About this RNA: Chemical mapping of a 177-nucleotide RNA with 2A3 and DMS. 2A3 adducts were read by reverse transcription with SuperScript II with manganese.

[RMDB]
RNA sequence: GGGAACGACUCGAGUAGAGUCGAAAAGGUUAAUAUAUGAGUGGCCUUUAUAGAGUGCAAUAUAUGUAUUUGUAGACGAGGAGGAUAGUGAUCGAAUAGAUCGGCGGAUGCUAUCCCGGAUGUGGCUCUAUUGUCAGGAGUUCGCUCCUGACAAUAGAAAAGAAACAACAACAACAAC
Reactivity to 2A3 in 0.01 (KOAc 150mM, MgCl2 10mM, bicine 150mM(pH8.5), 24C), signal-to-noise 5, nucleotides 027 to 126: g060g020u060u040a120a010u080a060u070a070u210g070a060g110u050g030g010c010c000u000u080u000a160u060a030g120a000g030u050g030c040a060a010u040a030u020a060u190g050u090a130u070u100u090g090u060a040g010a100c090g010a070g090g040a050g040g000a020u010a020g050u090g060a030u040c030g010a070a100u090a190g040a070u060c050g020g040c040g060g030a040u090g000c010u010a000u030c000c000c010g010g030a040u060g040u060g080g000c010u000
Reactivity to DMS in 0.01 (KOAc 150mM, MgCl2 10mM, bicine 150mM(pH8.5), 24C), signal-to-noise 2, nucleotides 027 to 126: g020g020u000u010a040a060u020a130u040a050u010g020a100g040u010g000g000c000c010u000u010u000a070u000a110g000a100g000u010g000c030a050a070u010a080u030a100u000g010u010a050u000u000u000g010u000a070g020a080c090g030a150g010g000a170g000g000a040u000a030g000u000g000a010u000c000g000a100a070u070a070g000a000u010c030g000g000c070g000g010a050u030g000c120u000a030u000c000c000c010g010g020a040u030g000u010g000g020c040u000

The reactions ran in a buffer of 150 mM KOAc, 10 mM MgCl2 and 150 mM bicine (pH 8.5), at 24 C.